The data come from the RNA Mapping Database (RMDB), library OK1LIB. The record gives the reactivity of an RNA of 177 nucleotides to DMS and 2A3.
RNA sequence: GGGAACGACUCGAGUAGAGUCGAAAAGAAAGGAUAUCAAAGAGAUAUUAAUUUGUUUUUUAAAUGACAUCUCACAUUGAAGAGCUAUAUUUUUAUUUGACCAAAUUAUGACCAAAUUAUGUUAAAAGAUUGGUUCCAACUUCGGUUGGAGCCGAUCAAAAGAAACAACAACAACAAC
Reactivity to DMS in 0.01 (KOAc 150mM, MgCl2 10mM, bicine 150mM(pH8.5), 24C), signal-to-noise 3, nucleotides 027 to 126: g000a090a100a070g000g010a120u020a090u000c010a040a100a130g010a070g000a010u010a040u010u010a080a060u010u000u000g000u000u030u030u000u020u030a030a020a040u000g020a030c170a000u000c030u010c070a060c090a100u030u020g000a080a060g000a050g000c030u000a030u010a030u000u010u010u000u010a050u000u010u010g000a070c050c050a040a020a090u010u010a080u020g030a120c070c050a040a050a030u030u030a050u010g000u000u000a060a050a090a110
Reactivity to 2A3 in 0.01 (KOAc 150mM, MgCl2 10mM, bicine 150mM(pH8.5), 24C), signal-to-noise 7, nucleotides 027 to 126: g090a040a070a010g040g010a040u070a020u120c060a080a110a030g060a020g020a020u010a030u060u120a110a100u070u050u080g060u020u040u020u020u020u160a070a090a040u070g020a030c030a160u050c050u030c060a050c030a100u050u190g060a080a040g010a010g010c040u040a030u020a090u220u040u030u020u060a130u030u040u040g020a010c030c000a010a040a040u160u120a120u120g050a040c020c020a040a050a040u180u140a100u170g070u070u090a080a080a010a000